Chemical mapping of a 177-nucleotide RNA with DMS and 2A3. The reactions ran in a buffer of 150 mM KOAc, 10 mM MgCl2 and 150 mM bicine (pH 8.5), at 24 C. For 2A3 the reverse transcriptase was SuperScript II with manganese. The data come from the RNA Mapping Database (RMDB), library M2PK50.
RNA sequence: GGGAACGACUCGAGUAGAGUCGAAAAGCUCCCAGGUUCGCCUGGGAGCAAAUAACAAGCGAGCAAAGGGUAAGGUAGGGAUGCUCGCAAACCCACCACCCAAAACCGACUAGUUCGCUAGUCGGAAGAAGCAUACUGAGUUCGCUCAGUAUGCUUCAAAAGAAACAACAACAACAAC
Reactivity to DMS in 0.01 (KOAc 150mM, MgCl2 10mM, bicine 150mM(pH8.5), 24C), signal-to-noise 1, nucleotides 027 to 126: g000c000u000c000c020c020a030g020g040u000u010c180g000c000c000u000g000g000g010a010g050c010a000a000a070u030a100a110c090a050a130g000c010g000a000g060c000a130a120a150g060g010g000u010a120a070g000g020u000a130g000g000g030a250u000g000c030u000c030g000c020a010a010a070c000c000c000a220c110c140a190c000c000c040a090a030a110a150c000c000g000a030c000u000a030g000u000u020c140g000c000u010a000g000u000c000g000g000a060a040
Reactivity to 2A3 in 0.01 (KOAc 150mM, MgCl2 10mM, bicine 150mM(pH8.5), 24C), signal-to-noise 1, nucleotides 027 to 126: g040c030u000c010c000c000a000g000g000u020u040c240g070c070c000u000g010g040g000a010g000c000a000a010a010u010a000a000c040a040a000g010c020g000a010g030c020a040a080a260g070g000g010u120a080a050g030g110u050a050g040g050g070a040u020g000c000u010c030g000c000a020a050a070c000c040c000a010c000c010a050c010c030c000a000a030a000a070c000c000g000a000c000u000a000g010u050u080c170g020c120u000a000g000u000c000g000g000a000a010